[RMDB]
RNA sequence: GGGAACGACUCGAGUAGAGUCGAAAAUGCCGCCACAGCCUCCGCCGGCUACCCGAACGUUCUCGGGGCCAGCGCCGAGUGGAUCACCGGGGACCGCGAGGCACCCGCGCGCCGCAGACCCCGCGCGCUGGGUUCUAAGUUUCGACUUAGAACCCAGAAAAGAAACAACAACAACAAC
Reactivity to DMS in 0.01 (KOAc 150mM, MgCl2 10mM, bicine 150mM(pH8.5), 24C), signal-to-noise 3, nucleotides 027 to 126: u040g000c020c020g010c020c030a060c100a180g000c070c040u000c040c060g030c090c030g000g020c020u000a130c020c000c030g030a110a230c160g000u030u000c010u010c000g010g010g000g010c020c040a100g010c050g000c020c040g020a060g020u010g020g020a040u010c050a080c070c030g000g020g000g020a160c060c040g010c100g000a060g010g000c040a080c080c040c050g080c090g000c050g010c020c030g000c060a060g000a110c050c020c030c060g000c080g000c150g030
Reactivity to 2A3 in 0.01 (KOAc 150mM, MgCl2 10mM, bicine 150mM(pH8.5), 24C), signal-to-noise 4, nucleotides 027 to 126: u060g010c010c000g020c010c040a070c040a010g010c020c000u030c020c030g060c020c020g020g020c030u110a150c000c000c010g040a080a050c080g110u200u070c030u000c050g010g000g020g000c020c030a070g020c040g020c050c020g040a040g010u080g030g040a140u110c030a040c080c040g020g010g010g010a030c000c030g030c040g010a040g020g000c000a060c010c010c000g030c010g010c010g010c020c010g010c000a010g020a160c010c000c000c000g020c000g000c010g020